Chemical mapping of a 177-nucleotide RNA with DMS and 2A3.
RNA sequence: GGGAACGACUCGAGUAGAGUCGAAAAACGAACUGGAGCGGGUGAUCCGCGGCGAAUAGGGUCUCUGAAUGACAAGGGCAAGGUGCGUAGGAGGGAACGGCACAAUGACAGGCGGUGCCGCUGCCUGGAGGCCUAUAUACUUCGGUAUAUAGGCCUCAAAAGAAACAACAACAACAAC
Reactivity to DMS in 0.01 (KOAc 150mM, MgCl2 10mM, bicine 150mM(pH8.5), 24C), signal-to-noise 4, nucleotides 027 to 126: a100c110g000a100a110c080u010g000g000a130g010c030g030g000g010u040g000a100u030c020c040g010c070g010g020c070g020a090a070u020a100g010g010g000u010c020u020c060u000g010a100a110u030g000a070c090a070a050g000g000g000c030a060a030g000g020u000g010c060g000u020a130g000g020a110g000g000g010a120a090c090g000g000c010a030c080a070a050u050g010a180c100a040g010g000c060g000g010u010g010c030c040g020c030u000g000c010c020u000g010
Reactivity to 2A3 in 0.01 (KOAc 150mM, MgCl2 10mM, bicine 150mM(pH8.5), 24C), signal-to-noise 4, nucleotides 027 to 126: a010c030g040a040a020c050u030g050g050a050g010c090g000g040g010u200g030a070u090c030c040g020c000g030g030c010g050a060a080u100a200g000g030g030u020c040u010c020u090g120a110a080u160g020a000c050a070a100g060g020g020c080a080a010g050g020u050g050c060g050u080a010g060g010a010g000g020g010a050a000c010g050g000c020a010c010a080a100u220g030a030c020a040g010g040c020g030g050u040g010c020c040g020c010u020g050c000c000u020g030
High DMS reactivity at an A or C suggests that its Watson-Crick edge is free. 2A3 adducts were read by reverse transcription with SuperScript II with manganese. For 2A3, 2,570 sequencing reads were counted. Source: RMDB library OK1LIB, as collected in RNAgym.